[RMDB]
This 177-nucleotide RNA was probed chemically with 2A3 and DMS. High DMS reactivity at an A or C suggests that its Watson-Crick edge is free.
RNA sequence: GGGAACGACUCGAGUAGAGUCGAAAAGAUAUGGACCGUGAACUACGUCGAUUCUGAUGACCCUUCUCGGAAACGAGAAGGCAAGGGGACGCACGGUCCUAAGUCAAAACGCACGUUCGCGUGCGAACACAUCUGCUAGCUUCGGCUAGCAGAUGUGAAAAGAAACAACAACAACAAC
Reactivity to 2A3 in 0.01 (KOAc 150mM, MgCl2 10mM, bicine 150mM(pH8.5), 24C), signal-to-noise 2, nucleotides 027 to 126: g030a010u050a000u020g000g000a010c010c000g030u000g030a110a130c220u220a080c270g040u020c060g170a200u300u130c050u260g230a300u110g010a080c020c000c000u000u030c000u000c020g000g030a020a000a000c000g000a000g000a000a000g000g000c000a040a020g020g040g110g020a000c000g000c040a010c000g010g000u000c000c000u010a000a040g000u000c000a010a000a040a110c030g060c010a000c000g000u070u110c290g030c000g120u020g000c000g040a060a010
Reactivity to DMS in 0.01 (KOAc 150mM, MgCl2 10mM, bicine 150mM(pH8.5), 24C), signal-to-noise 1, nucleotides 027 to 126: g000a030u000a150u000g010g000a040c000c010g030u020g000a110a150c200u000a210c030g010u000c000g030a160u000u000c080u000g020a080u000g010a190c300c030c000u000u000c000u050c010g000g000a040a000a050c000g000a010g000a010a000g010g000c040a040a030g030g000g000g000a000c010g010c000a000c000g020g000u000c000c000u000a000a000g000u000c030a170a030a080a200c000g000c020a050c000g010u000u010c140g000c030g020u000g010c010g000a050a170